[RMDB]
RNA sequence: GGGAACGACUCGAGUAGAGUCGAAAACAUAUGCAUUUAGUUCGUGGCCCAGUUUAUGACCACAUAAAGGACAUUAUUUUCUGAUUAAUGCCAACUUUGAGUUUAGGAUAUGUUCUGGACAUACUUGCGCAAUAUCACAGUUCGCUGUGAUAUUGCGAAAAGAAACAACAACAACAAC
Reactivity to DMS in 0.01 (KOAc 150mM, MgCl2 10mM, bicine 150mM(pH8.5), 24C), signal-to-noise 1, nucleotides 027 to 126: c090a050u000a030u000g010c070a100u000u000u000a070g030u010u000c110g000u000g000g000c020c010c100a130g030u000u000u020a040u000g010a030c010c010a030c040a070u020a060a050a040g020g020a030c030a020u000u000a020u000u000u000u000c200u010g000a080u020u000a020a040u000g010c030c060a030a070c080u020u000u000g000a130g010u010u000u010a040g000g010a010u000a040u000g010u000u000c040u000g020g010a040c050a030u000a040c050u000u000g010
Reactivity to 2A3 in 0.01 (KOAc 150mM, MgCl2 10mM, bicine 150mM(pH8.5), 24C), signal-to-noise 2, nucleotides 027 to 126: c020a030u090a030u200g070c040a030u010u010u100a030g000u040u050c050g000u020g020g000c060c030c060a040g000u030u070u000a190u110g030a050c040c010a020c020a060u210a070a110a010g000g010a030c000a000u020u090a040u040u090u130u000c040u090g100a110u060u140a070a010u120g040c020c010a040a040c150u070u110u090g070a100g020u010u040u150a020g080g010a020u020a000u080g060u000u020c050u030g020g000a010c000a030u110a050c020u020u010g000
Structure probing data (DMS and 2A3) for a 177-nucleotide construct. Values cover nucleotides 27 to 126. It was measured as part of the RMDB library RFMREP. The DMS profile rests on 1,076 reads. For DMS the reverse transcriptase was MarathonRT. The RNA was probed in 150 mM KOAc, 10 mM MgCl2 and 150 mM bicine (pH 8.5) at 24 C.